[RMDB]
RNA sequence: GGGAACGACUCGAGUAGAGUCGAAAACUGCAGCAACGAAUCUUCCGCAAUGGGCGCAAGCCUGACGGAGCAAUGCCGCGUGCGGGAUGAAGCGUCUUGACGUGUAAACCGCUGUCAGGGGGUCGAACAAGUACGUAGUGUUCGCACUACGUACUUGAAAAGAAACAACAACAACAAC
Reactivity to 2A3 in 0.01 (KOAc 150mM, MgCl2 10mM, bicine 150mM(pH8.5), 24C), signal-to-noise 2, nucleotides 027 to 126: c020u050g030c040a010g000c020a020a080c040g080a100a050u030c010u130u020c060c010g000c050a050a160u190g010g010g010c010g010c060a080a050g000c010c000u060g030a040c020g000g010a020g000c020a060a130u100g010c040c010g050c050g060u080g000c000g000g000g040a110u300g030a050a010g000c010g020u030c010u140u130g080a030c000g030u050g000u070a030a000a030c020c000g050c040u050g120u100c050a040g000g010g000g000g010u000c020g010a080a030
Reactivity to DMS in 0.01 (KOAc 150mM, MgCl2 10mM, bicine 150mM(pH8.5), 24C), signal-to-noise 4, nucleotides 027 to 126: c070u000g010c010a040g010c020a060a090c140g010a170a060u000c100u020u000c020c010g030c070a130a110u000g030g030g010c000g000c250a150a160g030c000c010u010g020a070c020g000g000a080g010c110a100a160u000g010c010c040g010c030g030u000g010c000g000g010g000a040u000g000a150a300g000c030g000u010c060u000u000g030a010c010g010u020g000u000a000a250a300c050c020g010c000u000g010u010c070a140g010g000g010g000g010u000c060g000a090a130

Record summary:
This 177-nucleotide RNA was probed chemically with 2A3 and DMS. The DMS profile rests on 2,495 reads. The RNA was probed in 150 mM KOAc, 10 mM MgCl2 and 150 mM bicine (pH 8.5) at 24 C. The 2A3 profile rests on 2,525 reads. It was measured as part of the RMDB library RFMREP.